Structure probing data (DMS and 2A3) for a 207-nucleotide construct. For 2A3 the reverse transcriptase was SuperScript II with manganese. For DMS the reverse transcriptase was MarathonRT. For DMS, 1,772 sequencing reads were counted. The reactions ran in a buffer of 150 mM KOAc, 10 mM MgCl2 and 150 mM bicine (pH 8.5), at 24 C.
RNA sequence: GGGAACGACUCGAGUAGAGUCGAAAACAUAAGACCUCAGAGCUAAUAAGCCACAUACCUACCCAAGGUGAAAGCUCCUUCUCUCGCAAUGUGUAACUCAUGAUUCUCAUGACCCCUGGUUGGAGAGCGCGCUAACACGCCUUCGGGCGUGUUAGAAACGAGUUAGAACUUUCGAGUUCUAACUCGUAAAAGAAACAACAACAACAAC
Reactivity to DMS in 0.01 (KOAc 150mM, MgCl2 10mM, bicine 150mM(pH8.5), 24C), signal-to-noise 1, nucleotides 027 to 156: c060a140u000a070a110g010a090c040c010u010c010a070g000a160g030c000u000a080a130u010a120a120g000c000c020a090c080a110u000a080c030c030u020a110c010c020c050a060a060g020g000u000g010a060a050a100g010c050u000c040c030u000u000c040u010c010u000c080g040c010a160a070u030g010u010g030u010a090a080c040u010c030a080u010g010a060u010u000c110u000c030a100u000g010a120c040c010c010c020u010g030g040u020u000g000g000a050g010a060g040c110g010c060g050c040u000a020a000c010a000c000g000c000c000u010u000c300g050g030g060c000g000u000g000u000u000a010g000a060a080
Reactivity to 2A3 in 0.01 (KOAc 150mM, MgCl2 10mM, bicine 150mM(pH8.5), 24C), signal-to-noise 2, nucleotides 027 to 156: c010a060u160a070a060g080a090c000c020u080c080a030g000a010g000c010u040a090a080u110a290a050g050c060c000a060c010a080u130a050c010c010u030a060c020c020c040a050a030g010g000u040g040a060a060a000g020c010u000c000c030u080u040c020u000c010u020c020g060c110a050a040u080g050u010g030u140a070a040c020u020c040a040u030g030a160u260u080c090u020c050a030u040g020a050c000c000c000c050u050g000g030u020u040g000g020a010g010a010g020c040g000c000g000c020u000a000a000c010a000c000g000c000c000u030u070c160g060g000g030c000g010u000g000u000u000a010g000a010a000